[RMDB]
Structure probing data (2A3 and DMS) for a 177-nucleotide construct. Reactivities are given for positions 27 through 126. DMS adducts were read by reverse transcription with MarathonRT.
RNA sequence: GGGAACGACUCGAGUAGAGUCGAAAAUGUUAAGUCAGGCAACGAGCGAGACCCAUUUCCACUGUUGCUAACGACUCCGCGAGGAGGGCGAGUACACUGUGGAGACCGCUGGCGCUAAGUCAGAGGAGACAUUAAGAACGUUCGCGUUCUUAAUGUCAAAAGAAACAACAACAACAAC
Reactivity to 2A3 in 0.01 (KOAc 150mM, MgCl2 10mM, bicine 150mM(pH8.5), 24C), signal-to-noise 3, nucleotides 027 to 126: u130g010u040u080a060a080g080u050c070a010g010g050c020a030a040c050g020a020g040c030g020a070g070a090c020c000c020a060u090u070u000c010c000a010c020u040g020u080u070g000c000u000a000a020c010g010a000c000u000c010c000g010c040g030a060g000g020a000g000g040g030c000g000a000g000u000a010c030a010c160u030g000u010g010g000a000g030a020c010c010g010c010u000g010g000c010g010c110u150a160a050g000u000c010a000g000a010g040g040a110
Reactivity to DMS in 0.01 (KOAc 150mM, MgCl2 10mM, bicine 150mM(pH8.5), 24C), signal-to-noise 3, nucleotides 027 to 126: u020g010u000u010a080a110g000u000c060a100g000g010c070a090a100c070g010a120g010c020g000a120g000a130c000c010c020a230u000u010u010c010c010a010c000u000g000u010u000g010c000u000a050a020c000g000a090c000u010c000c000g000c300g000a180g000g010a020g020g010g020c030g000a030g010u000a010c110a010c020u020g000u000g000g000a020g010a140c010c010g000c000u000g010g000c030g010c220u000a080a080g010u000c030a020g000a050g020g010a290
Conditions: 150 mM KOAc, 10 mM MgCl2 and 150 mM bicine (pH 8.5), 24 C.